[RMDB]
Chemical mapping of a 207-nucleotide RNA with DMS and 2A3. The reactions ran in a buffer of 150 mM KOAc, 10 mM MgCl2 and 150 mM bicine (pH 8.5), at 24 C. For 2A3, 6,024 sequencing reads were counted. For 2A3 the reverse transcriptase was SuperScript II with manganese.
RNA sequence: GGGAACGACUCGAGUAGAGUCGAAAAGCCGAUACUUUCGAGUAUCGGCAAAACCUUUGUGUACGAAGAACAUAUGGUGUGCUCGUCCCAUUGGGACGAGAACUACACGAGAGUAUGGGAGUACACUCUGGUAAAUGUGAACACUUCGGUGUUCACAACCAUUUCUAGUGUUCGCACUAGAAAUGGUAAAAGAAACAACAACAACAAC
Reactivity to DMS in 0.01 (KOAc 150mM, MgCl2 10mM, bicine 150mM(pH8.5), 24C), signal-to-noise 3, nucleotides 027 to 156: g000c000c000g030a020u000a010c010u000u000u000c250g020a060g040u000a010u010c000g020g000c000a000a000a040a070c010c010u000u000u000g010u000g030u000a020c020g010a220a200g030a120a190c000a040u000a010u010g020g050u000g040u000g010c000u000c000g020u010c000c000c010a300u000u000g050g020g030a030c010g000a010g000a000a040c050u000a070c020a080c050g020a190g010a200g000u000a020u000g020g020g010a300g010u000a020c000a010c010u010c030u010g000g000u000a030a020a130u010g030u000g010a010a030c010a000c010u000u010c300g050g020u000g000u010u000c000a000c020a040
Reactivity to 2A3 in 0.01 (KOAc 150mM, MgCl2 10mM, bicine 150mM(pH8.5), 24C), signal-to-noise 6, nucleotides 027 to 156: g000c000c000g000a000u000a000c010u040u090u170c200g030a010g020u000a000u000c000g000g000c000a010a020a000a000c000c000u000u020u000g010u000g000u000a010c020g080a290a060g020a170a010c020a010u040a030u120g300g000u020g000u010g030c000u000c000g020u020c010c010c090a300u210u300g010g010g000a000c000g000a000g000a010a030c010u050a010c010a000c030g150a190g010a010g160u010a010u010g010g000g020a010g000u000a000c000a000c000u000c010u000g020g000u080a120a110a080u080g000u000g000a000a000c010a010c010u030u080c300g090g010u000g000u000u000c000a000c000a000